Conditions: 150 mM KOAc, 10 mM MgCl2 and 150 mM bicine (pH 8.5), 24 C. Chemical mapping of a 177-nucleotide RNA with DMS. For DMS, 16,953 sequencing reads were counted. For DMS the reverse transcriptase was MarathonRT.
RNA sequence: GGGAACGACUCGAGUAGAGUCGAAAAGAUAUGGACUGAGUGCUUCAUUCGAAUUAGGGUAGAUUUGUGUCGGAAACGACACUGAUCUAUAAUCCUACUGUUCGAAUGAAGCACUCAGUCCUAAGUCCAUUAUAAGGUUGUUCGCAACCUUAUAAUGAAAAGAAACAACAACAACAAC
Reactivity to DMS in 0.01 (KOAc 150mM, MgCl2 10mM, bicine 150mM(pH8.5), 24C), signal-to-noise 9, nucleotides 027 to 126: g010a090u010a300u010g000g010a010c000u000g000a010g020u000g010c010u000u000c000a010u010u000c000g010a020a020u000u000a010g010g010g020u000a010g010a010u000u000u000g010u000g010u000c000g000g010a140a110a290c000g010a010c000a010c000u000g000a000u000c000u000a060u000a300a110u010c010c000u010a050c300u010g010u000u000c010g010a020a000u000g000a010a010g010c000a000c000u000c000a000g000u000c000c000u000a010a050g000u000c050